[RMDB]
RNA sequence: GGGAACGACUCGAGUAGAGUCGAAAAGUACUCUUGUGGAGCUGAUACGAAAUACUCCUAACACUAUGCGACGCAGACAGCCACCACAGGGCACGUGAGGGAGAUAAUGUAUUAUAAGAAUGACACACUACUAAUACCCGUUCGCGGGUAUUAGUAGAAAAGAAACAACAACAACAAC
Reactivity to 2A3 in 0.01 (KOAc 150mM, MgCl2 10mM, bicine 150mM(pH8.5), 24C), signal-to-noise 2, nucleotides 027 to 126: g080u040a070c010u010c020u120u070g020u050g060g070a020g030c060u030g040a020u070a130c050g040a050a130a010u100a190c000u030c010c000u030a130a040c010a060c110u070a050u150g090c080g160a080c120g030c030a000g070a140c070a040g020c000c020a120c030c000a060c050a050g020g000g030c050a020c080g020u040g000a090g000g010g010a050g000a030u090a070a020u110g060u020a050u100u120a090u030a140a040g100a110a040u110g030a000c000a000c000a010
Reactivity to DMS in 0.01 (KOAc 150mM, MgCl2 10mM, bicine 150mM(pH8.5), 24C), signal-to-noise 3, nucleotides 027 to 126: g030u020a080c060u000c050u000u010g050u000g020g000a250g060c070u000g020a130u000a040c050g040a080a110a100u000a090c050u010c020c030u000a090a080c100a050c050u010a060u010g030c030g020a130c130g020c040a020g000a110c090a060g010c010c010a150c020c040a060c080a080g000g000g010c050a050c100g010u000g000a230g000g000g000a050g030a050u010a030a080u010g010u020a070u010u000a080u000a030a090g020a110a050u020g000a070c080a080c130a180

An RNA of 177 nucleotides, treated with 2A3 and DMS and read out base by base. It was measured as part of the RMDB library OK2TRN. For DMS the reverse transcriptase was MarathonRT. For 2A3 the reverse transcriptase was SuperScript II with manganese. The reactions ran in a buffer of 150 mM KOAc, 10 mM MgCl2 and 150 mM bicine (pH 8.5), at 24 C. The 2A3 profile rests on 1,331 reads. For DMS, 1,769 sequencing reads were counted.